[RMDB]
RNA sequence: GGGAACGACUCGAGUAGAGUCGAAAAAACGCUGGGAGUUAGGGAGUUAUAAGUAUAACAUCAGUCUACUGAAGCGCGCACGGUAGACGACGACGUUAUACAUAACGUUGAUCUAACUCCUGUGCUGAAGCGCGCACGGCAACCGAAAGGUGCGAAAGCUAACCAGAAACUUCGGUUUCUGGUUAGCAAAAGAAACAACAACAACAAC
Reactivity to 2A3 in 0.01 (KOAc 150mM, MgCl2 10mM, bicine 150mM(pH8.5), 24C), signal-to-noise 1, nucleotides 027 to 156: a000a000c020g000c030u040g000g000g000a010g000u000u010a010g000g010g000a010g010u020u000a090u070a300a060g010u050a000u000a000a010c010a050u160c040a020g000u000c000u000a010c000u030g030a210a100g000c010g010c000g000c010a030c020g000g000u010a000g040a010c010g150a050c050g000a000c010g010u000u000a020u000a010c000a000u020a000a000c020g130u180u010g000a000u010c000u000a000a000c000u010c010c000u000g000u000g000c020u020g010a080a000g030c000g000c000g010c000a000c000g050g000c000a030a020c000c010g040a090a050a030g060g000u020g000c050g040a150a020a000